[RMDB]
RNA sequence: GGGAACGACUCGAGUAGAGUCGAAAAUGCCCUCGUCCGCGCGCUCGAACGCUCCUCCGCCGGUCCGGCUUCUCCUUCGUGCGGAGGCCUUUGGAAACAAAGGCGAAAGUCGGCCGAAUGUCCGAGGCCAUCAUAGAAUUUUCGAAUUCUAUGAUGGAAAAGAAACAACAACAACAAC
Reactivity to DMS in 0.01 (KOAc 150mM, MgCl2 10mM, bicine 150mM(pH8.5), 24C), signal-to-noise 7, nucleotides 027 to 126: u020g010c020c000c010u000c050g010u010c020c020g010c050g010c050g010c030u000c040g010a070a090c080g010c050u000c020c000u000c030c040g010c090c010g010g000u030c010c010g010g000c010u000u000c020u000c020c010u010u020c140g020u020g020c170g000g010a040g020g010c000c000u000u000u000g000g000a170a110a220c010a000a010a010g000g020c010g010a060a040a040g010u000c010g000g010c030c010g010a110a070u010g000u020c040c030g010a100g010g000
Reactivity to 2A3 in 0.01 (KOAc 150mM, MgCl2 10mM, bicine 150mM(pH8.5), 24C), signal-to-noise 9, nucleotides 027 to 126: u140g040c000c000c010u010c030g070u030c010c020g010c010g000c010g010c020u030c040g040a080a020c040g010c030u030c010c010u020c010c010g030c010c000g010g020u100c020c000g010g000c000u040u010c010u010c010c010u070u180c110g110u100g060c080g000g000a020g030g010c000c000u010u000u000g010g010a020a020a020c000a010a010a000g000g000c010g030a060a030a000g020u010c000g010g000c000c010g060a080a070u110g030u020c040c020g010a030g040g030